Description
An RNA of 207 nucleotides, treated with 2A3 and read out base by base. The reactions ran in a buffer of 150 mM KOAc, 10 mM MgCl2 and 150 mM bicine (pH 8.5), at 24 C. The 2A3 profile rests on 856 reads. The data come from the RNA Mapping Database (RMDB), library RSTRND. Reactivities are given for positions 27 through 156.
RNA sequence: GGGAACGACUCGAGUAGAGUCGAAAAGCGCAUUCUAGUCUGUGGGAUGCGUGCUAAAUUAAAGCAGAAUCGCCAUGUCGUCAUCCUGUCUGUCGGAGGGCGGUGCGGUUAAAGCCAAAAGACAAACUACGCAUGUAGAUCCGGUGGUCUAGGUACUAGAUACCUUGGGGUUCGCCCCAAGGUAUCUAAAAGAAACAACAACAACAAC
Reactivity to 2A3 in 0.01 (KOAc 150mM, MgCl2 10mM, bicine 150mM(pH8.5), 24C), signal-to-noise 1, nucleotides 027 to 156: g000c000g000c000a000u000u000c020u000a040g010u010c000u020g010u020g000g010g000a000u010g000c000g000u000g000c020u130a050a120a280u280u070a010a010a090g050c000a000g010a040a050u040c000g010c000c020a030u120g040u060c000g040u030c020a010u010c000c020u060g030u050c010u040g040u010c040g010g000a000g000g010g010c010g070g000u010g040c010g000g000u020u020a060a040a010g080c000c010a000a040a020a020g030a030c020a010a110a000c010u080a040c030g040c100a130u160g080u040a000g010a110u050c100c140g120g030u070g040g000u030c020u020a030g080g000u010a040c050u000